[RMDB]
RNA sequence: GGGAACGACUCGAGUAGAGUCGAAAAGAUAUGGACCCUCCCUUACAACAGCGUCUAUUCGGAAACGAAUAGGACGACAUGUAACCAGGGUCCUAAGUCAAAAGUCGAGUGGUUCGCCACUCGACAAGCCAGAAAUUAGGUUCGCCUAAUUUCUGGCAAAAGAAACAACAACAACAAC
Reactivity to 2A3 in 0.01 (KOAc 150mM, MgCl2 10mM, bicine 150mM(pH8.5), 24C), signal-to-noise 2, nucleotides 027 to 126: g010a000u020a020u080g000g000a000c000c010c000u000c060c060c020u020u010a070c100a300a070c110a300g000c000g010u030c020u010a000u010u000c000g000g000a000a020a000c000g030a000a000u060a070g170g060a010c010g020a010c050a280u300g020u010a000a030c060c020a010g000g000g000u000c000c000u000a020a000g010u010c030a080a080a080a130g000u000c010g000a000g000u010g120g040u060u070c290g080c170c000a000c010u020c000g000a000c000a010a000
Reactivity to DMS in 0.01 (KOAc 150mM, MgCl2 10mM, bicine 150mM(pH8.5), 24C), signal-to-noise 2, nucleotides 027 to 126: g010a020u020a040u010g000g000a010c020c000c000u000c170c150c230u010u000a000c000a210a100c270a150g030c010g000u000c000u000a020u000u010c010g010g000a020a020a050c000g030a030a010u000a050g050g000a020c000g000a010c040a140u010g020u000a000a030c190c290a000g020g030g010u000c000c000u000a000a070g010u010c000a110a110a080a140g030u000c000g000a030g030u000g000g000u000u040c300g030c000c000a010c010u000c000g010a000c010a030a040
An RNA of 177 nucleotides, treated with 2A3 and DMS and read out base by base. For 2A3 the reverse transcriptase was SuperScript II with manganese. The reactions ran in a buffer of 150 mM KOAc, 10 mM MgCl2 and 150 mM bicine (pH 8.5), at 24 C. It was measured as part of the RMDB library TTRDES. The 2A3 profile rests on 3,028 reads.